[RMDB]
RNA sequence: GGGAACGACUCGAGUAGAGUCGAAAAAGGAAGAGAUCGUCCGUAGUAGCAAGCUGCUGGAGGGUAUCUCGGUCAGCAUCUCGAUUGGCAAGACGUCCACUCCGGGUACGCGCCGCUCAUGCGAUGACAGAUAGAUACGCUUCGGCGUAUCUAUCUGAAAAGAAACAACAACAACAAC
Reactivity to 2A3 in 0.01 (KOAc 150mM, MgCl2 10mM, bicine 150mM(pH8.5), 24C), signal-to-noise 1, nucleotides 027 to 126: a000g100g010a040a030g020a010g030a050u020c010g040u000c090c010g020u040a030g000u010a010g070c040a120a000g000c000u050g000c000u090g010g020a000g070g050g050u050a040u020c020u000c030g020g030u040c010a000g000c020a090u030c050u030c090g190a170u010u060g000g000c010a060a050g100a070c030g060u050c010c020a150c050u060c060c060g000g020g090u040a000c060g010c000g000c010c000g000c020u030c040a050u180g020c050g120a090u040g030a010
Reactivity to DMS in 0.01 (KOAc 150mM, MgCl2 10mM, bicine 150mM(pH8.5), 24C), signal-to-noise 2, nucleotides 027 to 126: a090g020g000a100a080g000a090g010a030u000c050g000u000c020c040g030u000a060g000u010a090g000c130a080a200g030c010u010g010c020u000g030g000a040g020g010g030u000a040u020c020u000c080g000g020u000c020a060g020c080a100u000c080u000c130g000a180u010u000g010g010c050a120a080g010a100c120g020u000c020c010a060c080u010c050c010g000g020g000u000a030c090g020c090g010c030c020g010c050u000c040a040u000g000c120g000a070u000g000a210
Structure probing data (2A3 and DMS) for a 177-nucleotide construct. The 2A3 profile rests on 1,139 reads. Values are in units of 0.01, from 0 to 300, in steps of 10. For 2A3 the reverse transcriptase was SuperScript II with manganese. The RNA was probed in 150 mM KOAc, 10 mM MgCl2 and 150 mM bicine (pH 8.5) at 24 C. For DMS the reverse transcriptase was MarathonRT.